[RMDB]
RNA sequence: GGGAACGACUCGAGUAGAGUCGAAAAAGAUUAGGCAUAAAUGUAUGAUGUAAAAGAUGAUGUAAAGCCAUCAGCACAGUACCUGGUAUAAAGUAAACUGUCAUUAAAUGUUAACUAUUAUUGCUGUUGCUAUUAUAUGUACAAGGACUUUAUAUGACCGUGGUCAGUAUUUCGAUACUGACCACGGAAAAGAAACAACAACAACAAC
Reactivity to 2A3 in 0.01 (KOAc 150mM, MgCl2 10mM, bicine 150mM(pH8.5), 24C), signal-to-noise 1, nucleotides 027 to 156: a000g100a040u110u180a040g090g000c060a060u080a090a040a050u060g000u020a120u200g010a000u050g020u100a000a100a000a090g070a060u070g000a090u090g060u170a090a090a000g070c020c010a010u010c020a000g020c040a010c000a050g000u040a050c000c010u000g000g050u000a000u070a000a020a070g000u020a000a100a120c000u000g040u040c020a040u010u040a020a110a070u010g020u060u050a010a020c040u000a060u230u080a160u010u300g050c040u020g090u070u080g020c000u000a000u160u040a050u070a020u070g090u100a020c040a000a000g070g000a000c010u000u010u040a050u040a000u180g080a030